This 177-nucleotide RNA was probed chemically with 2A3 and DMS. Values are in units of 0.01, from 0 to 300, in steps of 10. 2A3 adducts were read by reverse transcription with SuperScript II with manganese. The data come from the RNA Mapping Database (RMDB), library OK2TRN. Values cover nucleotides 27 to 126.
[RMDB]
RNA sequence: GGGAACGACUCGAGUAGAGUCGAAAAGCGGGGUGCCUAAGCAGUGUCCAUCAUGGACGUGGGUCUCUGCUGGCCACGCAAGGGGAAGAUGGGACUGGUGGGAAGAUUGGGGAGAUGGAAGCGGGGGCAUCUGUGUAAAGUUCGCUUUACACAGAUGAAAAGAAACAACAACAACAAC
Reactivity to 2A3 in 0.01 (KOAc 150mM, MgCl2 10mM, bicine 150mM(pH8.5), 24C), signal-to-noise 4, nucleotides 027 to 126: g030c020g000g020g060g030u210g050c010c030u100a110a000g010c020a010g010u020g020u010c020c000a040u090c060a100u300g210g050a100c060g010u060g000g040g080u060c030u000c000u050g000c010u010g000g010c020c010a000c010g010c040a050a060g070g000g010g000a070a130g070a160u110g010g010g050a070c100u080g030g030u130g060g040g030a050a040g040a050u120u150g020g010g010g010a140g040a050u140g060g030a090a030g020c070g020g000g010g000g010
Reactivity to DMS in 0.01 (KOAc 150mM, MgCl2 10mM, bicine 150mM(pH8.5), 24C), signal-to-noise 4, nucleotides 027 to 126: g000c020g010g010g040g030u010g040c040c030u010a110a100g030c030a040g000u010g020u010c000c000a030u010c130a240u000g000g010a080c170g020u000g000g010g010u020c040u000c020u000g000c020u000g010g000c010c010a040c020g020c050a100a080g000g000g000g010a100a110g000a140u010g010g000g020a110c100u000g000g010u010g000g020g010a110a060g010a120u000u000g010g000g000g020a130g000a110u000g010g000a070a080g010c100g000g000g000g010g000